[RMDB]
RNA sequence: GGGAACGACUCGAGUAGAGUCGAAAAACGCACCAUACGUGGUGCGAGACGGUGAUGAAGAAUUUUAUUGAUAUGGUGUCAGGACCUCUGAGAGUUCCGUGACUGAGGAUUAGAGUUCCUGAGUCAACGCGGAAAUAUCCUUCGGGAUAUUUCCGCGAAAAGAAACAACAACAACAAC
Reactivity to 2A3 in 0.01 (KOAc 150mM, MgCl2 10mM, bicine 150mM(pH8.5), 24C), signal-to-noise 1, nucleotides 027 to 126: a000c000g010c000a000c000c000a000u040a130c140g130u180g000g000u000g120c000g000a000g040a000c070g000g300u070g110a210u010g090a110a300g010a190a300u020u230u290u200a070u100u280g000a130u080a060u110g060g040u070g040u160c000a000g010g000a000c110c000u000c000u010g100a060g000a000g100u050u000c000c030g000u040g080a140c000u070g200a170g010g000a000u020u020a000g000a040g220u000u000c000c030u050g000a000g000u000c030a130a000